The record gives the reactivity of an RNA of 177 nucleotides to DMS and 2A3.
[RMDB]
RNA sequence: GGGAACGACUCGAGUAGAGUCGAAAAGAUAUGGAUGUACAAGGACAUAUUCAGCGAAGAACUUCUAUUUCUCUCGGAAACGAGAGAAAUAGAAGGGAGCUGAUAUGGUCGGGGUACAUCCUAAGUCCGUAUAGGUCAUGUUCGCAUGACCUAUACGAAAAGAAACAACAACAACAAC
Reactivity to DMS in 0.01 (KOAc 150mM, MgCl2 10mM, bicine 150mM(pH8.5), 24C), signal-to-noise 2, nucleotides 027 to 126: g020a060u020a300u010g000g030a030u000g030u010a010c000a150a230g000g010a040c000a020u000a050u020u010c000a010g020c000g000a090a190g000a110a270c000u000u000c000u000a000u000u000u000c010u000c000u010c000g030g000a120a080a240c000g000a000g000a020g000a000a000a000u000a010g010a000a000g000g000g000a020g010c000u000g000a010u000a010u000g000g000u010c010g010g000g000g000u000a000c000a010u000c000c000u000a010a100g000u000c030
Reactivity to 2A3 in 0.01 (KOAc 150mM, MgCl2 10mM, bicine 150mM(pH8.5), 24C), signal-to-noise 2, nucleotides 027 to 126: g100a010u150a030u300g010g010a000u020g010u020a030c040a100a090g130g020a000c010a010u070a060u230u300c020a140g010c070g290a300a060g050a100a060c000u020u000c000u030a030u000u000u000c020u020c010u000c000g000g050a140a050a070c010g010a010g000a000g000a000a010a000u000a000g000a000a000g000g020g020a000g000c000u000g000a000u000a000u040g110g060u030c030g090g020g090g000u010a000c010a000u000c000c000u010a060a020g050u000c040

The RNA was probed in 150 mM KOAc, 10 mM MgCl2 and 150 mM bicine (pH 8.5) at 24 C.